[RMDB]
RNA sequence: GGGAACGACUCGAGUAGAGUCGAAAAUUAAAGGAUAAUCCGGCGCAUGCCUCGCUCUUGGUGGAGGUACGCACGAUGUCUAAGAGUGAAGCUAAGUAUCUAUUAGAUCCUGUUGAGCGUCAAGCGGCAGACCAUCCUCGUUCGCGAGGAUGGUCUGAAAAGAAACAACAACAACAAC
Reactivity to DMS in 0.01 (KOAc 150mM, MgCl2 10mM, bicine 150mM(pH8.5), 24C), signal-to-noise 2, nucleotides 027 to 126: u000u000a040a080a240g000g000a030u000a020a080u020c080c080g000g000c060g020c070a150u000g030c000c020u000c000g030c040u010c160u000u020g000g010u000g040g000a110g010g010u000a060c120g040c080a130c120g010a120u020g010u010c020u000a030a070g000a030g040u010g000a050a060g000c030u000a080a060g000u000a070u010c040u000a200u000u000a070g020a100u000c020c020u000g010u000u000g000a050g000c040g000u000c060a150a080g000c100g030g030